[RMDB]
The data come from the RNA Mapping Database (RMDB), library M2RFOK. The record gives the reactivity of an RNA of 207 nucleotides to DMS and 2A3. For 2A3 the reverse transcriptase was SuperScript II with manganese.
RNA sequence: GGGAACGACUCGAGUAGAGUCGAAAACCUCACUACAUUUUACUGUUCCUAAAGAAUUUGUGACAGGUACAGUUAAACGUAUUGCAAGGUUUAUCAGUUCCUAUAAACAGGUAAAUAACAAUAUAUGAAAAGCAAAGACUGUUCGCAGUCUUUGCAAGCAAACGAUAUAGUUCGCUAUAUCGUUUGCAAAAGAAACAACAACAACAAC
Reactivity to DMS in 0.01 (KOAc 150mM, MgCl2 10mM, bicine 150mM(pH8.5), 24C), signal-to-noise 2, nucleotides 027 to 156: c030c000u000c000a060c070u010a080c010a030u020u000u000u000a030c010u000g010u000u000c010c030u010a100a120a210g020a190a200u010u010u000g000u000g020a240c300a080g010g000u000a000c020a040g020u000u000a040a010a010c030g020u000a000u000u010g010c000a130a010g030g080u010u000u010a100u010c150a090g030u010u010c010c020u000a170u000a040a090a140c070a080g000g030u000a090a030a140u000a090a090c020a090a120u010a150u000a100u010g000a120a070a060a150g010c010a000a050a000g000a010c000u010g050u000u010c300g050c010a000g010u000c000u010u010u020g030c000a020a060
Reactivity to 2A3 in 0.01 (KOAc 150mM, MgCl2 10mM, bicine 150mM(pH8.5), 24C), signal-to-noise 7, nucleotides 027 to 156: c000c000u020c000a010c010u010a000c000a020u010u000u000u030a010c000u000g010u030u060c020c000u100a120a140a050g140a200a240u200u230u270g130u110g070a060c080a050g000g000u010a000c000a000g000u010u020a000a000a000c010g000u000a000u010u030g030c080a060a060g030g010u010u010u020a170u120c020a020g020u020u020c000c000u040a080u150a100a100a010c070a010g070g070u090a060a110a070u180a160a080c040a110a060u140a020u060a060u240g090a070a100a020a010g000c000a000a010a000g000a000c000u000g030u040u070c180g000c070a000g000u000c000u000u000u000g000c000a000a010
The RNA was probed in 150 mM KOAc, 10 mM MgCl2 and 150 mM bicine (pH 8.5) at 24 C. The DMS profile rests on 2,133 reads.